RNA sequence: GGGAACGACUCGAGUAGAGUCGAAAAGCGAAGAUCCUCGGAAGGAAUUCUCCCAAGAAGCGAAGAGAACACAAGAAUCGGAAGUCUUCCCGAAGACGCCGGGGACAUCUCGGAAUGAGAAAGGAGAGAAGGUGGACCUUCGGGUCCACCAAAAGAAACAACAACAACAAC
Reactivity to 2A3 in 0.01 (KOAc 150mM, MgCl2 10mM, bicine 150mM(pH8.5), 24C), signal-to-noise 2, nucleotides 027 to 129: g040c010g040a020a000g030a060u040c040c000u020c000g020g020a020a030g000g020a040a020u140u000c000u000c000c000c000a040a010g040a020a000g020c030g020a110a000g030a000g000a060a000c050a000c020a130a000g000a030a030u080c100g010g000a050a040g020u000c020u070u000c080c000c000g050a030a020g020a000c030g000c040c020g000g000g000g020a000c020a020u040c030u000c000g010g060a040a050u170g000a000g010a060a050a020g030g010a050g000a000g030a050a000
Reactivity to DMS in 0.01 (KOAc 150mM, MgCl2 10mM, bicine 150mM(pH8.5), 24C), signal-to-noise 2, nucleotides 027 to 129: g070c080g000a110a060g020a050u050c040c020u030c000g000g050a000a010g000g020a100a110u030u030c040u000c050c110c110a100a050g010a030a080g030c170g020a120a020g000a040g000a080a020c110a080c000a070a090g000a090a030u020c000g030g060a020a060g000u030c040u010u040c010c030c020g010a120a090g000a050c130g060c050c080g030g010g030g010a040c050a080u010c020u000c050g000g000a130a060u140g000a080g030a000a040a020g020g000a040g000a060g020a000a190